Notes: This 177-nucleotide RNA was probed chemically with DMS and 2A3. For 2A3 the reverse transcriptase was SuperScript II with manganese.
RNA sequence: GGGAACGACUCGAGUAGAGUCGAAAACUUCUUCAGAUCAGCGAAGAACGGAACCGUCACCUUAGUUCCUUGUAAAAUCCAAACUAUGCCCUCGCCCGGCCGGCAGUGAAAACUGAUCUUAAUCAAGAUGUCUAGUUAAAUUCGUUUAACUAGACAUAAAAGAAACAACAACAACAAC
Reactivity to DMS in 0.01 (KOAc 150mM, MgCl2 10mM, bicine 150mM(pH8.5), 24C), signal-to-noise 9, nucleotides 027 to 126: c150u000u010c010u010u020c060a050g010a050u020c080a060g020c100g010a070a050g000a090a080c090g000g020a060a080c050c030g010u010c040a060c040c050u000u010a100g000u000u010c010c010u010u010g020u030a050a050a090a090u010c050c060a050a070a090c110u030a080u010g000c010c020c020u000c070g010c020c010c020g010g010c040c050g010g000c020a050g010u010g000a070a060a090a080c020u000g000a040u000c030u010u020a070a100u030c150a080a100g010
Reactivity to 2A3 in 0.01 (KOAc 150mM, MgCl2 10mM, bicine 150mM(pH8.5), 24C), signal-to-noise 9, nucleotides 027 to 126: c020u050u030c000u060u040c030a010g020a180u050c020a010g070c020g080a080a020g020a090a040c050g020g030a030a040c020c010g040u050c030a060c020c020u040u050a030g030u040u040c010c000u010u080g160u120a110a090a030a070u060c040c020a080a050a030c040u060a060u170g030c000c000c010u030c020g020c000c000c000g030g000c000c000g010g000c010a030g010u030g070a040a030a020a030c020u010g020a030u020c010u040u130a100a110u140c080a050a040g050
Notes:
For DMS the reverse transcriptase was MarathonRT.